[RMDB]
RNA sequence: GGGAACGACUCGAGUAGAGUCGAAAAGUGAACAUUCUAGUAGGCCGCCUCAACAGAGGACGUCUAUGAAUGGUGAGGGAGCCAACCCUUGUAAUUGCAAAGCGUGGUUUUAAUACCACUAUGCAAGAAAUGCAGUCCUCUUCGGAGGACUGCAUUUAAAAGAAACAACAACAACAAC
Reactivity to DMS in 0.01 (KOAc 150mM, MgCl2 10mM, bicine 150mM(pH8.5), 24C), signal-to-noise 1, nucleotides 027 to 126: g000u050g000a070a210c000a020u000u000c000u010a250g030u000a000g000g020c040c140g060c020c000u000c000a170a140c250a140g000a050g080g000a020c070g040u000c020u000a070u000g020a000a010u000g000g000u000g000a000g000g000g010a110g020c030c110a070a140c000c000c000u000u010g050u040a000a080u000u000g020c000a000a000a110g020c270g000u050g000g070u000u020u020u070a140a110u070a030c000c000a000c000u020a150u000g000c000a000a000g020
Reactivity to 2A3 in 0.01 (KOAc 150mM, MgCl2 10mM, bicine 150mM(pH8.5), 24C), signal-to-noise 1, nucleotides 027 to 126: g060u070g000a010a040c040a000u000u020c070u030a180g060u000a000g000g000c000c040g000c040c000u070c040a160a220c050a200g000a000g000g030a030c010g000u010c000u000a000u070g000a030a000u000g030g020u090g000a000g000g020g000a030g000c000c000a030a040c050c000c000u040u060g050u040a140a190u010u020g000c000a010a010a000g140c060g110u000g010g000u000u000u050u200a090a020u270a000c000c000a000c000u000a000u000g030c000a000a000g130

Chemical mapping of a 177-nucleotide RNA with DMS and 2A3. Reactivities are rounded to 0.1 and cut off at 0 and 3. The RNA was probed in 150 mM KOAc, 10 mM MgCl2 and 150 mM bicine (pH 8.5) at 24 C. The data come from the RNA Mapping Database (RMDB), library RFM100.